[RMDB]
RNA sequence: GGGAACGACUCGAGUAGAGUCGAAAAUGGGCUACCAGUAAGCGAAAAAUGAUACAGGACGAAAAAAACAUAAUUCGAGAUUUUUCAGGAUGGAUUUUUUUAGGUAUCUAUGAAAACUAUUCUGAUGCAACGUAGAGCACGUUCGCGUGCUCUACAAGAUCAUCCUCUACUUCGGUAGAGGAUGAUCAAAAGAAACAACAACAACAAC
Reactivity to 2A3 in 0.01 (KOAc 150mM, MgCl2 10mM, bicine 150mM(pH8.5), 24C), signal-to-noise 2, nucleotides 027 to 156: u060g010g010g000c000u030a040c010c000a020g040u100a020a020g010c020g050a100a020a000a020a090u130g000a050u090a080c090a050g040g050a030c040g040a040a000a000a020a000a030a030c060a040u140a080a040u070u120c040g030a030g010a110u090u270u030u060u060c000a000g020g000a000u000g000g020a050u000u000u000u000u000u070u090a000g070g000u190a050u220c010u010a020u050g030a000a000a000a000c000u010a000u010u000c020u000g020a030u040g040c030a080a040c090g000u000a000g000a000g000c000a000c000g010u010u020c050g010c010g120u000g000c000u030c000u000a000c010a000a000
The data come from the RNA Mapping Database (RMDB), library M2RFOK. An RNA of 207 nucleotides, treated with 2A3 and read out base by base. The reactions ran in a buffer of 150 mM KOAc, 10 mM MgCl2 and 150 mM bicine (pH 8.5), at 24 C. Reactivities are rounded to 0.1 and cut off at 0 and 3.